[RMDB]
This 177-nucleotide RNA was probed chemically with DMS and 2A3. The 2A3 profile rests on 2,666 reads. 2A3 adducts were read by reverse transcription with SuperScript II with manganese. The data come from the RNA Mapping Database (RMDB), library OK1LIB. DMS adducts were read by reverse transcription with MarathonRT. The RNA was probed in 150 mM KOAc, 10 mM MgCl2 and 150 mM bicine (pH 8.5) at 24 C. As a SHAPE reagent, 2A3 marks flexible, mostly unpaired nucleotides at the ribose 2'-OH.
RNA sequence: GGGAACGACUCGAGUAGAGUCGAAAAAAAGUACUUGCUAAAUGUGCACUUCUCACACAGAAAUUCAUCGCUCCUUCCCUUUUGAUAUAUCCCGUAGCAGUACUUGUGAAUGUAAAUGGAGCAUCCGUACGCCUGAUUUAUUCGUAAAUCAGGCGUAAAAAGAAACAACAACAACAAC
Reactivity to DMS in 0.01 (KOAc 150mM, MgCl2 10mM, bicine 150mM(pH8.5), 24C), signal-to-noise 4, nucleotides 027 to 126: a030a030a020g010u000a010c010u020u050g060c000u020a060a070a130u050g000u030g010c060a030c070u030u010c020u000c030a160c040a060c080a090g000a090a060a070u020u020c090a050u010c100g000c020u000c000c010u000u000c000c000c000u000u010u000u030g010a080u020a050u030a080u020c010c000c000g010u010a050g050c010a020g000u000a000c010u010u000g020u010g020a100a040u030g010u010a050a060a080u030g000g000a040g000c080a060u020c070c090g030
Reactivity to 2A3 in 0.01 (KOAc 150mM, MgCl2 10mM, bicine 150mM(pH8.5), 24C), signal-to-noise 5, nucleotides 027 to 126: a000a000a000g010u040a020c040u170u130g010c010u040a070a100a160u120g030u050g040c030a040c060u100u010c020u020c020a040c000a000c000a010g130a060a150a050u190u110c050a050u110c100g010c020u020c010c030u030u060c010c010c020u020u050u050u060g210a130u070a020u010a050u120c000c020c040g000u030a000g000c010a010g000u030a000c000u030u050g060u050g100a140a100u110g010u120a090a140a060u120g020g020a040g050c020a010u030c020c020g040